Source: RMDB library 15KREP, as collected in RNAgym. Structure probing data (2A3 and DMS) for a 177-nucleotide construct.
[RMDB]
RNA sequence: GGGAACGACUCGAGUAGAGUCGAAAACAGCGCUCAACUCUGAAAAACAUCAAGACCAUGUGUCUCUAACUGUGCCACUCUGUGGUUCAGGAAACCUGGUUGAAAAACUUUCACCAUGGUUCAUGGACUAGAUAGUCGAGUUCGCUCGACUAUCUAGAAAAGAAACAACAACAACAAC
Reactivity to 2A3 in 0.01 (KOAc 150mM, MgCl2 10mM, bicine 150mM(pH8.5), 24C), signal-to-noise 2, nucleotides 027 to 126: c000a000g000c030g030c050u030c040a050a040c010u030c020u120g060a090a010a030a040a070c020a070u130c040a070a030g050a090c000c020a030u040g060u020g020u000c010u010c000u070a050a050c010u000g010u040g030c000c000a010c010u300c050u150g030u010g000g000u040u020c000a010g000g000a000a010a010c000c010u020g010g000u100u140g130a000a000a010a020a020c010u000u060u000c010a010c010c000a030u140g010g020u050u020c020a020u040g000g000a000
Reactivity to DMS in 0.01 (KOAc 150mM, MgCl2 10mM, bicine 150mM(pH8.5), 24C), signal-to-noise 2, nucleotides 027 to 126: c090a140g000c070g000c050u000c030a070a050c060u010c050u040g010a040a100a080a080a060c070a020u010c040a090a070g010a090c020c010a020u000g020u020g010u010c030u000c010u010a140a210c000u010g020u010g000c000c000a000c010u010c140u000g020u000g000g010u010u000c000a000g000g020a050a020a030c010c000u000g000g000u010u000g010a000a030a130a200a150c300u000u000u010c020a030c000c000a010u000g010g000u000u000c030a100u010g000g010a300

Notes: 2A3 adducts were read by reverse transcription with SuperScript II with manganese. Reactivities are given for positions 27 through 126. DMS adducts were read by reverse transcription with MarathonRT.